[RMDB]
RNA sequence: GGGAACGACUCGAGUAGAGUCGAAAAGAGAUGUAGUUCGCUACAUCUCAAACAUAAACAUGAGAAAAUGCAACGGAGGCACCGAAGCCAUAAAAGUAAAAUAAAGUACGUUGUUCGCAACGUACAACCAUAUGUAGAAGUUCGCUUCUACAUAUGGAAAAGAAACAACAACAACAAC
Reactivity to DMS in 0.01 (KOAc 150mM, MgCl2 10mM, bicine 150mM(pH8.5), 24C), signal-to-noise 7, nucleotides 027 to 126: g010a010g010a010u000g010u000a000g010u010u010c230g020c010u000a010c000a000u000c000u000c010a030a090a060c130a080u010a060a060a080c090a060u010g000a110g000a050a050a060a050u010g000c040a040a070c110g010g000a110g010g010c040a050c040c040g000a060a100g010c030c040a060u010a030a060a080a100g000u010a060a050a050a070u010a060a100a120g010u000a000c010g010u000u000g010u000u010c190g010c030a010a000c000g010u000a000c010a050a110
Reactivity to 2A3 in 0.01 (KOAc 150mM, MgCl2 10mM, bicine 150mM(pH8.5), 24C), signal-to-noise 9, nucleotides 027 to 126: g000a000g000a000u000g000u010a010g010u030u050c210g010c060u000a000c000a000u000c000u000c000a000a010a000c030a030u230a040a130a010c040a070u150g050a040g090a130a080a040a040u100g000c010a040a010c060g040g030a040g070g010c030a010c040c060g060a050a010g010c020c010a040u140a080a120a020a010g120u120a010a070a060a130u150a050a120a010g000u000a000c000g000u000u010g030u020u060c220g010c070a000a000c000g000u000a000c000a000a010